[RMDB]
RNA sequence: GGGAACGACUCGAGUAGAGUCGAAAAUGUGUGUGUAGUGAUGAUGAAAUGUAAUCGGCAGUCCCUUGACUCGGAAUGCGGUAUUAACAUGUCUCAGAUGUUAAGCACUGUUGCACUACAAAGGAUGUAAAAGUGAAGUAUUCGUACUUCACUUUUAAAAAGAAACAACAACAACAAC
Reactivity to DMS in 0.01 (KOAc 150mM, MgCl2 10mM, bicine 150mM(pH8.5), 24C), signal-to-noise 9, nucleotides 027 to 126: u030g010u010g010u010g010u000g010u010a020g010u000g000a100u020g010a080u030g000a040a070a030u010g010u010a070a050u010c020g010g010c020a030g010u000c020c020c060u020u020g010a110c170u020c300g000g000a040a030u000g010c010g000g000u020a040u000u010a050a030c020a010u000g000u020c060u020c080a090g000a100u020g000u010u020a060a100g010c190a030c030u010g000u010u020g010c070a030c020u010a020c060a050a080a100g000g010a120u030g010
Reactivity to 2A3 in 0.01 (KOAc 150mM, MgCl2 10mM, bicine 150mM(pH8.5), 24C), signal-to-noise 9, nucleotides 027 to 126: u120g040u010g000u000g000u000g010u030a030g030u010g070a100u030g020a020u040g060a050a060a070u140g040u120a060a050u070c020g050g000c020a000g040u050c030c010c000u030u080g050a060c050u020c070g010g030a060a030u050g020c030g010g020u050a050u060u030a050a020c020a020u070g240u050c030u020c100a040g040a120u100g030u080u050a040a020g010c020a010c020u010g030u060u060g000c020a010c030u020a000c010a010a060a010g120g020a090u160g030
The data come from the RNA Mapping Database (RMDB), library OK1LIB. Chemical mapping of a 177-nucleotide RNA with DMS and 2A3. The RNA was probed in 150 mM KOAc, 10 mM MgCl2 and 150 mM bicine (pH 8.5) at 24 C.